[RMDB]
Conditions: 150 mM KOAc, 10 mM MgCl2 and 150 mM bicine (pH 8.5), 24 C. An RNA of 177 nucleotides, treated with 2A3 and DMS and read out base by base. The 2A3 profile rests on 3,128 reads. Source: RMDB library RFM100, as collected in RNAgym.
RNA sequence: GGGAACGACUCGAGUAGAGUCGAAAAAGCCCCCCGGCCGUGGAUGCUGCACUCGGGCUCGGGAUCCGCCCAGGUAGCCGGCCUCGGACCCAGGUCCUGCGCCCAGGUCCUCCCCUGCCCCCCAGCGAUGUCUCCCAUAAUUCGUUAUGGGAGACAUAAAAGAAACAACAACAACAAC
Reactivity to 2A3 in 0.01 (KOAc 150mM, MgCl2 10mM, bicine 150mM(pH8.5), 24C), signal-to-noise 2, nucleotides 027 to 126: a000g040c020c000c000c000c000c020g030g020c020c030g020u030g050g040a070u080g030c020u040g010c030a070c090u060c070g040g020g000c030u020c040g020g020g010a020u020c020c010g010c010c010c000a000g000g030u020a030g030c030c030g040g020c000c010u020c020g040g010a070c030c010c020a010g000g020u010c020c020u040g000c040g010c020c000c000a010g010g000u020c010c000u030c010c020c000c010u020g000c000c000c000c000c000c010a000g070c030g050
Reactivity to DMS in 0.01 (KOAc 150mM, MgCl2 10mM, bicine 150mM(pH8.5), 24C), signal-to-noise 2, nucleotides 027 to 126: a070g020c030c000c010c030c020c070g000g010c040c030g000u020g020g020a090u010g000c010u020g010c030a100c070u020c110g010g000g000c020u030c030g020g010g030a060u050c010c010g000c060c040c020a060g000g010u010a070g000c050c090g000g000c030c030u000c060g000g000a070c050c060c060a160g000g000u000c020c010u020g000c070g010c010c010c050a120g000g010u010c030c020u010c010c010c010c030u010g000c010c010c010c000c000c030a150g010c190g010